[RMDB]
RNA sequence: GGGAACGACUCGAGUAGAGUCGAAAAAUUUCAGCAGCGAAGAAACAAAAGUGACGGUGGCUGCCGAAGAAGCGCCGACUAACUACGUGCUAGCAGCCACGGUAAUACGUAGGGCGCAAGCGAAUUCAAUAAAAUAAAUAUUCGUAUUUAUUUUAUUAAAAGAAACAACAACAACAAC
Reactivity to 2A3 in 0.01 (KOAc 150mM, MgCl2 10mM, bicine 150mM(pH8.5), 24C), signal-to-noise 2, nucleotides 027 to 126: a000u070u030u040c000a010g010c000a000g020c030g090a090a020g080a140a140a050c080a070a130a030a060g060u060g160a040c010g100g000u010g030g020c000u050g000c010c030g070a080a070g070a050a040g030c000g040c010c000g040a130c090u100a090a040c030u040a060c000g090u040g030c030u060a030g000c010a000g000c000c000a010c040g000g040u050a050a050u170a100c000g000u000a010g080g000g000c010g000c020a020a000g140c030g100a040a040u170u040c010
Reactivity to DMS in 0.01 (KOAc 150mM, MgCl2 10mM, bicine 150mM(pH8.5), 24C), signal-to-noise 2, nucleotides 027 to 126: a190u000u020u000c010a040g000c040a050g000c070g000a140a090g010a110a130a100c070a020a090a100a060g040u020g000a110c050g030g030u010g000g040c000u020g000c000c100g010a050a050g000a100a070g030c000g000c010c010g010a090c150u070a080a300c040u010a000c020g010u000g020c110u040a100g020c010a010g010c000c000a000c010g000g000u010a060a070u050a030c020g000u000a010g000g000g000c000g010c000a120a080g020c140g000a130a090u050u020c060
Conditions: 150 mM KOAc, 10 mM MgCl2 and 150 mM bicine (pH 8.5), 24 C. An RNA of 177 nucleotides, treated with 2A3 and DMS and read out base by base. The 2A3 profile rests on 704 reads. For 2A3 the reverse transcriptase was SuperScript II with manganese. The DMS profile rests on 3,255 reads. For DMS the reverse transcriptase was MarathonRT.